Structure probing data (DMS) for a 177-nucleotide construct.
Source: RMDB library OK2TRN, as collected in RNAgym.
The RNA was probed in 150 mM KOAc, 10 mM MgCl2 and 150 mM bicine (pH 8.5) at 24 C.
Values cover nucleotides 27 to 126.
Reactivities are rounded to 0.1 and cut off at 0 and 3.

RNA sequence: GGGAACGACUCGAGUAGAGUCGAAAAAAAAUACAAAUUGUGUAUAAGUUAGUUCUUCUAGGGAGCAACUGAGGCAUAAGAAAUAGUUUCUGAUCAGAAGAGAGCCUAGACGUCAGUUUGGAUUGUCGAGCAAAGUAUACUUCGGUAUACUUUGCUCAAAAGAAACAACAACAACAAC
Reactivity to DMS in 0.01 (KOAc 150mM, MgCl2 10mM, bicine 150mM(pH8.5), 24C), signal-to-noise 2, nucleotides 027 to 126: a050a140a010a080u010a070c040a010a060a060u000u020g000u000g010u010a040u010a110a080g000u010u000a100g010u000u000c020u000u020c080u020a280g020g020g000a080g030c060a060a000c030u000g010a090g050g010c130a120u020a080a110g000a070a030a100u000a070g020u010u020u000c010u000g000a210u000c100a060g000a070a080g000a060g000a060g000c000c010u000a030g010a080c040g020u020c000a010g020u000u010u000g000g000a040u010u010g030u000c080